Chemical mapping of a 177-nucleotide RNA with DMS and 2A3.
[RMDB]
RNA sequence: GGGAACGACUCGAGUAGAGUCGAAAAGAUCGGCUGUGGUGUGCUCACCACUGGAAGCGAAAGCCAAUCAGAGGAAGAUAUUGAUAACGUGAUUGAGGAGAUGCUUGAAGCUGACAUGGGAGCAGUCAAGGGUCUAAGAAUUCGUUCUUAGACCCUUAAAAGAAACAACAACAACAAC
Reactivity to DMS in 0.01 (KOAc 150mM, MgCl2 10mM, bicine 150mM(pH8.5), 24C), signal-to-noise 6, nucleotides 027 to 126: g000a080u000c050g010g020c030u000g020u000g010g010u000g030u010g010c090u010c040a080c020c020a030c140u000g000g010a220a040g010c020g000a120a070a080g000c030c040a040a040u010c030a050g010a110g010g000a100a080g010a110u010a110u010u010g000a090u010a070a110c120g010u000g000a060u010u000g010a100g000g000a110g000a110u010g000c040u000u010g000a120a150g010c030u000g010a120c040a100u010g010g000g000a050g000c020a060g010u000c140
Reactivity to 2A3 in 0.01 (KOAc 150mM, MgCl2 10mM, bicine 150mM(pH8.5), 24C), signal-to-noise 3, nucleotides 027 to 126: g060a080u070c030g030g020c050u030g020u040g060g070u060g040u070g080c040u050c040a290c020c020a020c130u040g010g040a010a010g010c020g040a100a020a000g010c000c000a000a010u050c000a020g060a070g210g070a070a090g070a130u150a090u250u270g070a060u060a240a050c070g030u040g030a030u010u040g020a080g090g090a150g020a060u120g000c020u000u000g060a130a000g040c010u020g010a010c000a000u030g050g000g010a000g000c000a020g020u030c020
For DMS the reverse transcriptase was MarathonRT.
The RNA was probed in 150 mM KOAc, 10 mM MgCl2 and 150 mM bicine (pH 8.5) at 24 C.